[RMDB]
RNA sequence: GGGAACGACUCGAGUAGAGUCGAAAAGAGUGGUGGUAUGCAUCUGUAGUCCCAGCUACUUGGGAGCCUGAGGCGGGAAGAUCACCUGAGCCCGGGGAGGUCAAGGCUGCAGUGAGCCAUGAUUGAGCCACUGCACUCAGGCCUGGGUAACAGAGUGAUCAUCACGAAGAUUCGUCUUCGUGAUGAUAAAAGAAACAACAACAACAAC
Reactivity to 2A3 in 0.01 (KOAc 150mM, MgCl2 10mM, bicine 150mM(pH8.5), 24C), signal-to-noise 3, nucleotides 027 to 156: g090a000g010u070g030g050u070g010g020u090a050u150g050c030a060u040c040u070g060u090a030g080u060c000c020c010a020g020c050u130a080c040u040u040g000g030g020a040g020c010c010u050g040a050g010g030c050g010g030g010a040a040g020a070u040c010a020c010c000u020g020a020g000c020c020c010g000g020g040g000a080g020g020u060c030a040a080g010g030c080u020g000c000a010g010u020g020a050g020c000c000a040u190g060a240u230u140g010a040g010c010c000a000c010u000g000c000a010c010u030c030a040g030g020c000c010u000g000g020g000u040a120a040c030a020g030a030g070u030g030
Reactivity to DMS in 0.01 (KOAc 150mM, MgCl2 10mM, bicine 150mM(pH8.5), 24C), signal-to-noise 2, nucleotides 027 to 156: g000a160g040u010g010g020u000g040g020u000a070u000g020c090a070u000c070u000g020u010a070g020u010c010c000c030a130g030c070u000a030c090u010u010g060g020g020a090g000c040c020u000g000a060g040g020c010g010g010g010a090a100g010a090u010c030a050c010c010u000g020a300g000c000c020c010g020g020g000g000a080g030g030u010c050a100a080g000g040c130u010g020c010a030g020u000g000a140g030c000c010a050u010g010a220u010u010g030a140g000c010c020a030c020u000g020c000a060c010u000c040a120g000g010c000c000u010g000g010g020u000a030a120c060a070g000a160g030u000g010
The data come from the RNA Mapping Database (RMDB), library OK3TST. Structure probing data (2A3 and DMS) for a 207-nucleotide construct. For 2A3, 3,007 sequencing reads were counted. For DMS the reverse transcriptase was MarathonRT. As a SHAPE reagent, 2A3 marks flexible, mostly unpaired nucleotides at the ribose 2'-OH. The reactions ran in a buffer of 150 mM KOAc, 10 mM MgCl2 and 150 mM bicine (pH 8.5), at 24 C.